[RMDB]
RNA sequence: GGGAACGACUCGAGUAGAGUCGAAAAUGCGCGCUUGGAGCGUGUUAGGCGAGUGCGUGCGCCCACCCCUGCGCCCCUCCUCCCGCUUACACUUUGAUCUUAUUUGAUCGGAUCGUGACCCCAGCCCAGUUGGAUGAUCAUUCGUGAUCAUCCAACUAAAAGAAACAACAACAACAAC
Reactivity to DMS in 0.01 (KOAc 150mM, MgCl2 10mM, bicine 150mM(pH8.5), 24C), signal-to-noise 3, nucleotides 027 to 126: u030g000c020g030c000g010c060u000u040g010g020a150g010c040g020u000g020u010u000a060g000g000c060g030a070g010u010g040c070g030u000g000c060g000c020c010c030a130c030c010c030c020u010g000c100g000c000c020c010c010u000c000c040u000c020c030c010g000c110u000u040a110c130a070c100u010u010u020g000a000u000c010u000u000a140u020u030u020g010a040u000c030g010g000a060u010c040g000u000g000a160c010c000c010c020a120g010c030c010c040
Reactivity to 2A3 in 0.01 (KOAc 150mM, MgCl2 10mM, bicine 150mM(pH8.5), 24C), signal-to-noise 7, nucleotides 027 to 126: u130g010c010g000c000g010c040u040u110g140g050a100g040c080g030u030g070u070u110a090g030g040c040g020a020g030u080g030c040g010u070g010c010g010c010c000c000a040c000c000c000c010u030g030c010g020c000c000c000c010u010c000c000u020c010c010c010g010c040u060u080a050c050a020c030u090u090u120g030a040u010c020u050u210a190u300u170u140g050a040u020c000g000g020a060u040c020g030u020g070a110c000c000c010c000a010g010c010c000c000
An RNA of 177 nucleotides, treated with DMS and 2A3 and read out base by base. The RNA was probed in 150 mM KOAc, 10 mM MgCl2 and 150 mM bicine (pH 8.5) at 24 C. For DMS the reverse transcriptase was MarathonRT. The data come from the RNA Mapping Database (RMDB), libraries RFM100 and RFMREP.